[RMDB]
RNA sequence: GGGAACGACUCGAGUAGAGUCGAAAAGGUUUUAUAUUGGAUGCUGUUUGUAGACCAGCAUGGCAGAAGUUCAUGAUGAGCCACAACAUGAUGGAGAACCAGACGGGAUCAUCGGAAUUCUCCCUAGCUAUAAAGGGGUCUUCGGACCCCUUUAUAGAAAAGAAACAACAACAACAAC
Reactivity to DMS in 0.01 (KOAc 150mM, MgCl2 10mM, bicine 150mM(pH8.5), 24C), signal-to-noise 1, nucleotides 027 to 126: g020g000u000u000u000u000a120u000a090u020u030g010g020a030u000g000c010u000g020u020u000u000g010u010a180g010a100c060c020a020g010c020a040u000g010g000c100a070g000a170a140g000u000u000c020a130u020g030a090u020g000a060g000c030c010a050c220a060a080c040a040u000g000a060u000g000g020a100g010a090a160c300c010a020g010a080c040g000g010g020a040u010c010a010u010c110g020g010a070a100u000u010c070u010c000c000c000u000a110g020